[RMDB]
RNA sequence: GGGAACGACUCGAGUAGAGUCGAAAAUAUUCCAGUACUAGAUAUGAUCGUGAUGGAGGGACGCAGUAGGCUAAGAGAUGCCAGUUAAUGGAUCCUGGUCUAAGCAGUGAGGUGUGAGAUGUGUCAAAUGCAUUUCUCUCUAACAUUGAGCUGUGAUUACAACAAAAGGCUUCGGCCUUUUGUUGUAAAAAGAAACAACAACAACAAC
Reactivity to DMS in 0.01 (KOAc 150mM, MgCl2 10mM, bicine 150mM(pH8.5), 24C), signal-to-noise 1, nucleotides 027 to 156: u000a070u000u010c050c010a150g030u000a100c040u000a080g000a300u000a050u000g030a130u010c080g020u010g070a170u000g010g000a070g000g040g080a140c200g030c090a050g000u000a090g000g040c030u060a070a050g000a150g010a180u000g020c010c060a090g050u000u000a050a040u000g000g000a040u000c030c020u000g000g000u020c040u000a080a170g010c000a020g060u000g020a300g040g000u000g000u000g010a080g010a000u000g000u000g000u050c070a150a120a180u010g000c060a070u000u010u000c010u000c000u000c140u000a140a050c050a090u000u000g050a300g060c000u000g010u010g000a140u000
Reactivity to 2A3 in 0.01 (KOAc 150mM, MgCl2 10mM, bicine 150mM(pH8.5), 24C), signal-to-noise 1, nucleotides 027 to 156: u150a060u050u020c040c000a000g070u130a020c080u080a080g120a160u180a100u080g080a030u100c080g050u040g050a060u050g000g060a020g000g030g010a030c060g000c030a000g010u030a000g000g000c010u000a010a000g030a010g000a070u100g040c000c010a080g020u070u180a040a070u100g000g010a010u010c000c000u020g060g000u060c010u050a100a000g000c000a000g010u030g050a030g000g000u020g010u030g040a000g000a000u040g080u010g060u100c130a110a110a090u210g000c020a020u000u080u000c080u000c000u060c040u060a040a070c000a080u010u010g050a030g010c060u010g010u000g060a030u100